[RMDB]
RNA sequence: GGGAACGACUCGAGUAGAGUCGAAAAAUAGCGAAUGCAUGGGGAACUACAUCUGUGUCGCGAGUUCGAUUCUCGCCAGGGCCUGGUCCUGUAGCUCAGUUGGUAGAGCAAGCUGUUCCCCGGACACAAAAUCCAGCUAGGUUCGCCUAGCUGGAAACAUUAAGGGUCGGUUCGCCGACCCUUAAUGAAAAGAAACAACAACAACAAC
Reactivity to 2A3 in 0.01 (KOAc 150mM, MgCl2 10mM, bicine 150mM(pH8.5), 24C), signal-to-noise 2, nucleotides 027 to 156: a000u110a000g030c000g060a170a050u140g060c090a070u130g000g030g000g000a030a040c040u100a040c060a200u110c060u030g070u010g020u130c010g000c000g010a000g000u010u000c020g000a020u010u010c000u000c010g030c010c020a000g010g010g020c050c250u230g020g030u050c030c000u020g000u030a000g000c000u000c000a080g000u150u220g080g130u150a000g000a010g000c000a000a000g040c040u020g000u000u010c000c000c020c000g000g010a020c020a000c010a040a150a040a100u010c010c000a000g000c010u020a000g000g000u040u010c100g070c040c000u000a000g010c000u030g000g000a000a000a000
Reactivity to DMS in 0.01 (KOAc 150mM, MgCl2 10mM, bicine 150mM(pH8.5), 24C), signal-to-noise 2, nucleotides 027 to 156: a060u000a070g030c000g010a060a070u000g020c010a110u010g010g000g050g000a050a050c010u010a030c060a040u000c110u000g010u000g010u010c000g000c020g000a050g000u000u000c030g020a300u020u000c000u000c000g010c000c030a050g020g030g020c020c110u000g010g000u000c020c000u000g000u010a060g000c000u000c010a000g010u000u000g010g010u000a100g000a050g050c000a260a140g010c030u000g010u000u070c000c010c000c090g010g000a110c100a120c050a110a080a040a090u010c000c020a000g020c000u000a000g000g040u000u000c300g030c010c020u010a000g000c000u000g000g000a000a020a070